[RMDB]
An RNA of 177 nucleotides, treated with DMS and 2A3 and read out base by base. High 2A3 reactivity points to a flexible backbone, as in loops and unpaired stretches. For 2A3 the reverse transcriptase was SuperScript II with manganese.
RNA sequence: GGGAACGACUCGAGUAGAGUCGAAAAUCGCUAAGCUUCGGCUUAGCGAAAAGUCGCGGCUUGAGGGCGUGUACGGCUGCGCACACACACGACCCUCUAGCCAAAGCAUCGUGUUCGCACGAUGCAAGCGUGCAUGUAUGUUCGCAUACAUGCACGCAAAAGAAACAACAACAACAAC
Reactivity to DMS in 0.01 (KOAc 150mM, MgCl2 10mM, bicine 150mM(pH8.5), 24C), signal-to-noise 2, nucleotides 027 to 126: u000c000g000c000u010a010a000g000c000u010u020c270g000g000c000u000u000a000g030c000g020a010a040a080a100g020u000c130g030c270g010g050c000u000u000g000a010g020g000g040c010g000u000g000u000a100c120g010g000c010u000g000c160g020c050a050c070a100c100a030c010a010c060g000a160c010c000c010u010c000u010a010g000c000c000a000a110a120g010c020a000u000c000g010u000g000u000u000c170g000c000a010c020g000a000u000g030c010a020a050
Reactivity to 2A3 in 0.01 (KOAc 150mM, MgCl2 10mM, bicine 150mM(pH8.5), 24C), signal-to-noise 3, nucleotides 027 to 126: u020c020g010c020u000a000a000g010c000u040u150c220g140g000c000u000u000a000g010c000g000a000a020a000a000g050u020c040g010c080g040g000c010u030u020g000a010g010g000g000c020g000u010g010u040a050c090g030g010c050u210g050c070g090c060a050c000a000c000a000c010a000c060g300a300c010c000c000u040c010u010a000g000c000c000a020a010a000g000c000a010u000c000g000u000g050u030u040c220g010c090a000c000g000a010u010g000c000a020a000

DMS adducts were read by reverse transcription with MarathonRT. For 2A3, 4,261 sequencing reads were counted. The RNA was probed in 150 mM KOAc, 10 mM MgCl2 and 150 mM bicine (pH 8.5) at 24 C.